[RMDB]
RNA sequence: GGGAACGACUCGAGUAGAGUCGAAAAUAAGGCUGCGGCUGGUUUGGCGGGAAGCGGACCUGCGAACUGGUAUUAUUGUUGGGUUCGUAACUCAAUAAAUUACCCUAGCGCUUAAAAACACUCACCUGAAUUAUUAUUACUUCGGUAAUAAUAAUUCAAAAGAAACAACAACAACAAC
Reactivity to 2A3 in 0.01 (KOAc 150mM, MgCl2 10mM, bicine 150mM(pH8.5), 24C), signal-to-noise 1, nucleotides 027 to 126: u070a020a020g020g000c000u030g030c020g080g000c070u080g000g020u020u050u060g060g000c010g010g010g020a020a020g020c000g000g030a010c010c000u010g000c000g010a060a020c040u100g060g080u170a110u230u030a110u070u100g100u060u080g000g000g020u030u010c030g020u040a010a000c010u000c000a000a010u040a020a010a010u030u010a030c020c000c000u020a020g000c070g200c030u030u050a000a110a000a010a000c040a030c000u030c020a070c000c040u010
Reactivity to DMS in 0.01 (KOAc 150mM, MgCl2 10mM, bicine 150mM(pH8.5), 24C), signal-to-noise 1, nucleotides 027 to 126: u000a060a040g000g010c000u010g020c200g000g030c150u010g000g000u000u000u000g010g050c300g000g000g000a070a150g010c020g020g000a020c020c040u000g030c040g000a060a080c160u000g000g000u000a080u020u010a090u010u010g000u000u000g010g010g000u000u000c270g000u010a070a170c000u000c010a040a270u020a000a010a060u000u010a110c030c000c060u000a050g010c030g000c020u000u000a020a030a140a100a060c160a110c070u020c060a070c170c050u000
Notes
Chemical mapping of a 177-nucleotide RNA with 2A3 and DMS. For 2A3, 1,617 sequencing reads were counted.